The record gives the reactivity of an RNA of 177 nucleotides to DMS and 2A3. The RNA was probed in 150 mM KOAc, 10 mM MgCl2 and 150 mM bicine (pH 8.5) at 24 C. It was measured as part of the RMDB library OK1LIB.

[RMDB]
RNA sequence: GGGAACGACUCGAGUAGAGUCGAAAAGUGUAGGUUAAUUAAGGCGGGAGUUAAUUAACUGAAGAUCGAAUUAAUUGAAGUUCCGCCGUUAAAAGAAAUUAAUUACGAUCUUCAAAGAAUGCACGAACCCAAUUGAAUACUUCGGUAUUCAAUUGGGAAAAGAAACAACAACAACAAC
Reactivity to DMS in 0.01 (KOAc 150mM, MgCl2 10mM, bicine 150mM(pH8.5), 24C), signal-to-noise 1, nucleotides 027 to 126: g000u010g020u000a010g020g000u030u000a020a010u010u010a010a020g000g030c060g000g000g000a070g000u000u000a050a000u010u010a000a030c020u020g000a000a000g000a010u000c010g000a070a010u000u000a010a030u000u010g010a130a150g020u010u000c040c050g000c000c020g060u030u040a020a040a180a100g000a150a000a040u000u000a000a020u020u010a090c000g010a030u000c000u020u000c000a050a110a160g000a090a020u000g000c010a010c020g010a090a110
Reactivity to 2A3 in 0.01 (KOAc 150mM, MgCl2 10mM, bicine 150mM(pH8.5), 24C), signal-to-noise 3, nucleotides 027 to 126: g000u030g010u030a030g000g010u010u020a020a010u020u000a060a000g090g040c050g040g060g030a060g040u010u000a000a000u010u000a000a020c020u040g000a000a000g010a000u020c000g010a000a010u000u000a000a000u000u080g070a120a030g100u110u050c030c030g060c030c030g040u040u080a080a140a050a020g120a020a010a020u010u010a000a000u000u040a090c000g000a000u010c000u000u000c000a030a020a000g060a040a050u050g000c030a020c040g030a080a050